Chemical mapping of a 177-nucleotide RNA with 2A3 and DMS. As a SHAPE reagent, 2A3 marks flexible, mostly unpaired nucleotides at the ribose 2'-OH. For DMS, 1,054 sequencing reads were counted. Conditions: 150 mM KOAc, 10 mM MgCl2 and 150 mM bicine (pH 8.5), 24 C.

RNA sequence: GGGAACGACUCGAGUAGAGUCGAAAAUCUAACUUCUUCGGAAGUUAGAAAAUAAAAUCAGCGGUAAAUAUCGAGGCGUAAUUACCGCUGAACGCCUCGAAAAAAGAUUGUGCUUCGGCACAAUCAACAAAUACGAUCCGUUCGCGGAUCGUAUUUGAAAAGAAACAACAACAACAAC
Reactivity to 2A3 in 0.01 (KOAc 150mM, MgCl2 10mM, bicine 150mM(pH8.5), 24C), signal-to-noise 1, nucleotides 027 to 126: u010c000u000a000a020c000u000u000c010u030u030c190g110g010a010a000g010u000u000a000g010a000a000a000a000u100a000a030a000a060u050c000a000g000c000g050g030u080a050a030a030u160a080u130c080g100a070g080g100c050g010u000a020a000u090u030a010c000c000g030c010u000g010a000a000c020g000c000c010u020c040g000a130a060a000a000a000a000g000a000u000u000g000u010g000c010u040u060c150g150g010c000a000c030a010a000u000c000a010a000
Reactivity to DMS in 0.01 (KOAc 150mM, MgCl2 10mM, bicine 150mM(pH8.5), 24C), signal-to-noise 1, nucleotides 027 to 126: u000c000u010a000a010c000u000u000c000u000u010c170g000g000a000a010g010u010u000a000g000a040a000a110a070u000a020a100a110a060u000c020a010g000c000g000g000u000a040a010a080u000a060u000c040g000a090g020g020c080g040u000a020a090u000u000a030c000c010g000c000u020g000a020a020c140g020c010c020u000c120g030a020a070a070a080a040a090g020a010u000u020g010u000g000c020u000u010c200g030g020c000a010c000a010a010u010c000a100a070